Structure probing data (DMS and 2A3) for a 177-nucleotide construct.
Conditions: 150 mM KOAc, 10 mM MgCl2 and 150 mM bicine (pH 8.5), 24 C.
RNA sequence: GGGAACGACUCGAGUAGAGUCGAAAAGAUAUGGAUGUGGCAACAGCUGUUCCUAUUGUCAGAUUAUCUUCUCGGAAACGAGAAGUAAGAUCUUGGAUUUAUAGGAACCGAAUCCACAUCCUAAGUCCGUUGAGUAAAUGUUCGCAUUUACUCAACGAAAAGAAACAACAACAACAAC
Reactivity to DMS in 0.01 (KOAc 150mM, MgCl2 10mM, bicine 150mM(pH8.5), 24C), signal-to-noise 3, nucleotides 027 to 126: g000a080u000a300u000g000g000a010u010g020u030g000g000c300a160a210c200a150g000c100u000g000u000u000c010c000u000a000u000u010g000u000c000a030g010a020u000u000a300u010c000u000u000c010u000c000g000g000a180a170a220c010g000a000g010a000a000g010u030a060a250g000a000u000c010u010u010g030g010a040u010u010u000a010u010a010g010g000a010a000c010c020g010a130a100u000c000c000a020c000a000u000c000c010u010a000a130g000u010c040
Reactivity to 2A3 in 0.01 (KOAc 150mM, MgCl2 10mM, bicine 150mM(pH8.5), 24C), signal-to-noise 3, nucleotides 027 to 126: g050a050u130a030u230g010g000a010u000g020u010g050g000c080a220a050c030a300g010c090u050g020u020u010c010c000u000a010u000u020g000u020c010a000g000a010u000u030a080u240c010u030u000c020u020c000g060g000a100a110a080c000g000a000g000a000a000g010u030a060a080g040a020u000c000u080u220g300g020a060u170u300u130a030u030a010g020g000a010a000c000c010g030a010a040u020c000c000a000c010a010u000c000c000u010a150a000g050u000c040